[RMDB]
An RNA of 207 nucleotides, treated with 2A3 and read out base by base.
For 2A3 the reverse transcriptase was SuperScript II with manganese.
It was measured as part of the RMDB library ARCHII.
For 2A3, 1,073 sequencing reads were counted.
RNA sequence: GGGAACGACUCGAGUAGAGUCGAAAAACGCUGUAGCUGCCUAAACACCAGCAUAGCGUGAUCCGUCUGACUUCACCCAAGGGUUAGAUCCGGGUCUCAAAUUAAUUGGGUUACGUUAAAUGCCGCCGUUUGAAGUGUUUAAAAGAGAUUUUCAAGCCGAUGGUAUGGUGUUCGCACCAUACCAUCGAAAAGAAACAACAACAACAAC
Reactivity to 2A3 in 0.01 (KOAc 150mM, MgCl2 10mM, bicine 150mM(pH8.5), 24C), signal-to-noise 1, nucleotides 027 to 156: a000c000g000c000u020g000u010a090g010c000u000g000c010c020u020a010a010a030c020a010c010c000a020g020c020a020u020a010g000c010g020u010g000a020u000c000c020g010u000c000u000g010a000c010u020u020c070a030c010c000c000a010a000g010g030g000u000u010a000g010a050u010c200c080g000g010g060u020c030u020c060a100a170a180u250u280a050a250u060u020g000g000g000u020u040a040c020g010u010u040a010a040a050u020g010c000c000g000c010c000g000u000u020u000g010a000a020g000u000g040u000u020u090a020a040a000a000g060a030g010a080u100u060u040u180c010a020a020g010c050